[RMDB]
Source: RMDB library TTRDES, as collected in RNAgym. The record gives the reactivity of an RNA of 177 nucleotides to DMS and 2A3. The reactions ran in a buffer of 150 mM KOAc, 10 mM MgCl2 and 150 mM bicine (pH 8.5), at 24 C. 2A3 adducts were read by reverse transcription with SuperScript II with manganese.
RNA sequence: GGGAACGACUCGAGUAGAGUCGAAAAGAUAUGGACCACAGAAGCUCGAUAAGCUCAGUUUCGGAAACGAAACGAGCUUUUGACGAGCCACGUGGUCCUAAGUCAAAAGCCAGCCUUCGGGCUGGCACAGUCAAGCAAUGUUCGCAUUGCUUGACUGAAAAGAAACAACAACAACAAC
Reactivity to DMS in 0.01 (KOAc 150mM, MgCl2 10mM, bicine 150mM(pH8.5), 24C), signal-to-noise 2, nucleotides 027 to 126: g010a040u030a300u010g000g000a030c000c000a010c000a100g040a280a300g000c000u000c000g010a160u000a050a010g020c000u000c020a180g020u000u000u020c000g000g030a070a090a160c000g010a000a000a000c000g000a000g000c010u000u000u000u000g030a110c110g020a010g020c010c030a070c300g000u000g020g010u000c000c010u000a000a080g000u010c020a170a090a150a160g000c010c010a000g010c000c000u000u000c200g000g030g010c000u000g010g000c000a030
Reactivity to 2A3 in 0.01 (KOAc 150mM, MgCl2 10mM, bicine 150mM(pH8.5), 24C), signal-to-noise 1, nucleotides 027 to 126: g000a010u080a020u150g020g000a010c000c010a000c000a060g170a270a010g010c010u050c050g090a170u040a190a020g000c000u020c080a110g000u000u000u000c030g000g020a030a040a060c010g000a000a010a000c010g010a000g000c000u000u020u020u030g060a060c030g000a000g020c010c000a010c050g000u000g000g000u000c000c010u000a000a010g000u000c000a010a020a050a050g000c020c000a000g000c020c000u120u180c300g130g000g000c000u010g020g060c020a000